Chemical mapping of a 177-nucleotide RNA with DMS and 2A3.
It was measured as part of the RMDB library TTRDEL.
2A3 adducts were read by reverse transcription with SuperScript II with manganese.
Conditions: 150 mM KOAc, 10 mM MgCl2 and 150 mM bicine (pH 8.5), 24 C.
For 2A3, 6,854 sequencing reads were counted.
DMS adducts were read by reverse transcription with MarathonRT.
Values cover nucleotides 27 to 126.

RNA sequence: GGGAACGACUCGAGUAGAGUCGAAAAGAUAUGGACGUGACCUGGGAGAUGCUCGGAAACGAGGCAUCGAAGAACAGGCACGUCCUAAGUCAAAAGGACGUAUGCAUCUUCGGAUGCAUACGUCCAACAUUUAUAAGGACUUCGGUCCUUAUAAAUGAAAAGAAACAACAACAACAAC
Reactivity to DMS in 0.01 (KOAc 150mM, MgCl2 10mM, bicine 150mM(pH8.5), 24C), signal-to-noise 4, nucleotides 027 to 126: g000a040u000a300u000g000g000a010c010g010u000g000a170c000c000u000g000g010g010a120g010a010u000g000c010u000c000g010g010a090a070a170c010g010a030g020g010c000a000u010c000g010a080a180g010a120a160c010a010g010g000c000a000c010g000u000c000c000u000a010a050g010u000c020a060a090a130a130g010g000a010c000g000u000a000u000g000c000a010u000c000u000u010c200g010g000a020u000g000c000a000u000a000c000g000u000c000c000a020a030
Reactivity to 2A3 in 0.01 (KOAc 150mM, MgCl2 10mM, bicine 150mM(pH8.5), 24C), signal-to-noise 3, nucleotides 027 to 126: g020a010u070a030u140g000g010a000c000g010u010g300a300c000c000u010g010g020g010a050g000a000u010g000c000u010c000g010g060a040a070a040c020g020a060g230g140c020a000u000c010g020a130a010g030a050a000c000a000g010g010c000a000c010g000u010c010c000u000a000a000g000u000c010a020a010a030a150g000g000a000c030g000u020a000u000g000c010a000u000c020u110u140c300g060g000a000u010g000c000a000u000a000c000g010u020c000c000a000a000